[RMDB]
RNA sequence: GGGAACGACUCGAGUAGAGUCGAAAAGGUGUAAUCGAAAUCGAUUCAAAAAUGCUUGGUACUCGUACCGCUAACAUCUCAAACUUGGAAGGACAAGCUACUAAAGUCCCAGGCAACAACGAAGUACAGGAUGUUAUGAUUGGCCCUGGUUCACCAAGACCUGCCAUAUGUUCGCAUAUGGCAGGUCAAAAGAAACAACAACAACAAC
Reactivity to 2A3 in 0.01 (KOAc 150mM, MgCl2 10mM, bicine 150mM(pH8.5), 24C), signal-to-noise 1, nucleotides 027 to 156: g000g050u150g040u170a030a050u060c000g050a190a000a000u040c100g100a040u010u010c020a000a000a130a130a130u060g000c000u000u140g000g000u000a020c000u060c040g020u060a100c050c050g000c020u040a000a170c000a070u240c180u080c140a090a180a290c160u030u170g040g000a010a040g000g000a000c060a160a000g060c020u060a000c120u180a250a000a000g000u000c000c000c000a010g010g000c020a040a060c000a010a010c050g120a050a000g050u120a060c050a020g050g000a060u000g040u000u070a100u190g220a230u160u190g020g020c000c010c080u000g060g010u060u120c130a180c020c000a000a000